[RMDB]
Chemical mapping of a 207-nucleotide RNA with 2A3. The reactions ran in a buffer of 150 mM KOAc, 10 mM MgCl2 and 150 mM bicine (pH 8.5), at 24 C. It was measured as part of the RMDB library RNAMAK.

RNA sequence: GGGAACGACUCGAGUAGAGUCGAAAAGGGGUCUCCGUUUGACGCGAUUGACAUGCUCGCCACUGAAGCCUCCACGGUGGGAAGAGCAACAGCAAUCGCCGAGGAGACGGAGGCACCCAAACAUUAAACUGUAGGGUUCGCCCUACAGUUUAAUGAAUCCCGUUGAUUACUUCGGUAAUCAACGGGAAAAAGAAACAACAACAACAAC
Reactivity to 2A3 in 0.01 (KOAc 150mM, MgCl2 10mM, bicine 150mM(pH8.5), 24C), signal-to-noise 1, nucleotides 027 to 156: g030g000g020g000u000c000u030c000c000g020u010u040u060g100a040c040g000c000g000a000u000u050g040a220c070a050u060g000c000u020c040g190c030c030a000c000u060g050a260a140g100c050c030u130c130c070a060c000g020g000u020g020g030g130a300a170g000a040g040c000a020a100c040a110g000c010a000a000u000c000g000c010c000g050a100g130g090a060g000a000c010g000g000a000g000g000c000a280c000c000c020a000a070a000c020a000u000u000a000a000a000c000u000g000u020a000g060g050g020u080u100c210g150c020c000c010u040a000c000a000g000u000u000u000a000a000u000g000a000a000